[RMDB]
Source information:
The record gives the reactivity of an RNA of 207 nucleotides to DMS and 2A3. The reactions ran in a buffer of 150 mM KOAc, 10 mM MgCl2 and 150 mM bicine (pH 8.5), at 24 C. 2A3 adducts were read by reverse transcription with SuperScript II with manganese. Reactivities are given for positions 27 through 156.

RNA sequence: GGGAACGACUCGAGUAGAGUCGAAAAUCUCGAUCACGUACGUUCGUUCUCACUCGUACGAGUGAUCACACACGAGAUCUCGAGAGAGUGAACACGAGAACGAUCACACACGAACACACUCACGUGAACGAGAACGAACACUCGUGUGUACACGUACCAGUGGCUUCAAUUUCGAUUGAAGCCACUGAAAAGAAACAACAACAACAAC
Reactivity to DMS in 0.01 (KOAc 150mM, MgCl2 10mM, bicine 150mM(pH8.5), 24C), signal-to-noise 2, nucleotides 027 to 156: u000c010u000c000g020a170u000c050a070c020g010u000a110c060g040u000u000c050g020u000u020c050u000c030a240c030u000c000g050u000a090c030g010a030g010u000g010a110u000c050a140c070a100c100a160c040g010a050g010a090u000c010u000c000g000a270g000a230g000a140g020u010g030a160a080c090a140c110g000a100g030a070a090c060g020a060u000c060a100c060a080c030a070c020g000a060a170c020a150c020a120c040u000c050a120c060g070u000g000a170a130c020g010a080g030a020a070c060g000a120a070c080a150c110u000c000g020u000g000u000g020u010a130c120a150c050g000u000a090c100
Reactivity to 2A3 in 0.01 (KOAc 150mM, MgCl2 10mM, bicine 150mM(pH8.5), 24C), signal-to-noise 6, nucleotides 027 to 156: u000c010u000c010g040a100u080c030a010c060g010u080a020c050g010u030u020c000g010u000u000c030u000c010a040c010u030c010g070u170a090c090g020a060g050u020g030a020u030c010a020c020a010c000a000c120g020a030g010a080u020c000u010c020g110a140g000a020g000a030g100u070g080a090a020c110a020c130g040a040g020a060a030c070g010a060u070c000a010c000a000c000a010c050g050a120a020c090a010c020a010c050u100c030a050c090g040u040g070a140a040c100g010a000g010a060a010c030g040a020a010c040a010c040u000c010g000u000g000u000g020u040a050c080a010c120g040u060a060c040
The 2A3 profile rests on 4,772 reads.